Source: RMDB library RFM100, as collected in RNAgym. Structure probing data (2A3) for a 177-nucleotide construct. The 2A3 profile rests on 643 reads.
[RMDB]
RNA sequence: GGGAACGACUCGAGUAGAGUCGAAAAAGCCGUCAUACGUGACGGCAAUCACAAGUGGUGUCAGGACGACAAAAGCUCUGAGUCCUCUCAACACCAGAGUUUUGUUGCCCCGACUCCUUUUGUGGAAACUCCGGUCGAGGUUCGCCUCGACCGGAGUAAAAGAAACAACAACAACAAC
Reactivity to 2A3 in 0.01 (KOAc 150mM, MgCl2 10mM, bicine 150mM(pH8.5), 24C), signal-to-noise 1, nucleotides 027 to 126: a000g000c000c000g010u020c030a000u030a090c240g070u060g010a000c000g010g000c000a000a040u000c030a000c000a000a010g010u020g080g050u000g000u000c010a010g000g000a010c000g000a010c000a000a100a050a080g070c000u010c000u010g190a200g100u070c010c000u000c030u040c010a050a120c010a000c040c000a000g000a000g030u000u020u040u040g020u000u020g010c010c010c000c000g000a000c030u040c010c000u040u070u000u000g020u020g020g010a140a000